[RMDB]
RNA sequence: GGGAACGACUCGAGUAGAGUCGAAAAAAGUGAUUUGGGAAUUAGGCAGUUUAGGAGUAAUUGUACCAGUGUUCCCCUCUGCUAGCUUGGAAGAUGAAGAGCUGUUUUCAUACCUGUGCAUUGUGCUGGAAGAGGUAUUUGCCUUUGGUUCAGUGCAUGCCUCAUUUAAUUUCGAUUAAAUGAGGCAAAAAGAAACAACAACAACAAC
Reactivity to DMS in 0.01 (KOAc 150mM, MgCl2 10mM, bicine 150mM(pH8.5), 24C), signal-to-noise 3, nucleotides 027 to 156: a050a070g020u000g000a070u000u000u000g000g000g010a090a110u000u000a100g020g030c010a060g010u000u000u000a100g030g010a110g010u000a050a100u000u000g000u010a100c040c040a080g040u000g010u000u000c010c000c020c040u000c040u000g010c030u000a050g020c050u010u000g020g010a070a100g020a090u000g010a100a080g010a070g040c010u000g020u000u000u010u010c030a110u000a100c080c050u000g020u000g010c040a110u000u000g010u000g030c010u000g010g010a070a070g000a030g020g030u000a160u010u000u010g010c010c010u000u000u010g040g000u010u000c000a050g040u000g020c020a160
Reactivity to 2A3 in 0.01 (KOAc 150mM, MgCl2 10mM, bicine 150mM(pH8.5), 24C), signal-to-noise 5, nucleotides 027 to 156: a000a000g150u120g030a120u110u070u070g050g000g020a030a060u070u040a130g040g020c020a010g040u070u120u250a070g090g020a050g030u120a090a070u060u060g050u080a090c020c030a040g040u020g030u100u020c030c000c010c000u040c010u010g020c020u040a080g020c020u010u020g030g010a050a100g010a110u060g050a030a030g010a010g050c070u010g050u060u050u020u020c070a060u070a120c010c020u040g000u010g020c000a020u070u030g010u000g000c010u020g040g020a050a050g020a030g040g020u060a250u050u090u240g020c010c020u050u030u070g070g000u020u020c010a020g090u110g010c010a000
An RNA of 207 nucleotides, treated with DMS and 2A3 and read out base by base. For DMS the reverse transcriptase was MarathonRT. For 2A3, 3,038 sequencing reads were counted. As a SHAPE reagent, 2A3 marks flexible, mostly unpaired nucleotides at the ribose 2'-OH. Conditions: 150 mM KOAc, 10 mM MgCl2 and 150 mM bicine (pH 8.5), 24 C. It was measured as part of the RMDB library OK3TST.